[RMDB]
RNA sequence: GGGAACGACUCGAGUAGAGUCGAAAAGGGGUCUGUCUGUACCAGCGAACUACAGCAUCGAUCUUCUGAAGCCUCCACGGAAGGGAGCUGCGCUGGGUAGGACAGACGGAGGCACCCAAAAGCAAUUGAGCUGUUGUUCGCAACAGCUCAAUUGCAACCUUAAGUGCGGGUUCGCCCGCACUUAAGGAAAAGAAACAACAACAACAAC
Reactivity to 2A3 in 0.01 (KOAc 150mM, MgCl2 10mM, bicine 150mM(pH8.5), 24C), signal-to-noise 2, nucleotides 027 to 156: g040g000g060g000u020c010u010g000u000c010u060g300u300a080c000c010a000g010c020g060a150a100c130u300a200c300a010g010c000a080u300c050g070a080u010c000u010u000c000u020g030a110a020g030c000c020u050c000c020a030c010g020g000a000a000g000g010g000a000g010c020u030g000c020g000c000u000g030g000g020u060a040g010g020a000c010a010g000a000c000g060g030a050g020g010c000a060c010c000c040a040a100a010a080g020c000a000a000u000u000g000a000g020c000u000g000u040u000g000u080u130c260g040c160a010a000c000a000g000c010u000c010a000a000u000u000g010c010a000a010
Structure probing data (2A3) for a 207-nucleotide construct. 2A3 adducts were read by reverse transcription with SuperScript II with manganese. It was measured as part of the RMDB library RNAMAK.